This 177-nucleotide RNA was probed chemically with DMS.
For DMS, 13,143 sequencing reads were counted.

RNA sequence: GGGAACGACUCGAGUAGAGUCGAAAAGAUAUGGAGUGAGGUGGACUUCAUCGAUCACUAUACAAGACAUGAGAUCGGAAACGAUCUCAUGUCUUGUAUAGUGGGAGAAGCCACUCACUCCUAAGUCCAUUGUAUACAACUUCGGUUGUAUACAAUGAAAAGAAACAACAACAACAAC
Reactivity to DMS in 0.01 (KOAc 150mM, MgCl2 10mM, bicine 150mM(pH8.5), 24C), signal-to-noise 6, nucleotides 027 to 126: g010a100u000a300u000g000g010a020g020u000g010a020g020g020u000g030g010a210c010u000u000c010a300u000c180g000a110u010c000a010c000u000a010u000a010c000a010a010g000a020c000a010u000g000a020g000a020u000c010g000g000a120a090a240c010g000a010u000c000u000c000a000u000g000u010c000u000u000g000u000a000u000a010g020u000g010g010g000a040g020a020a010g010c010c000a050c000u000c010a000c000u000c000c000u000a000a070g000u010c050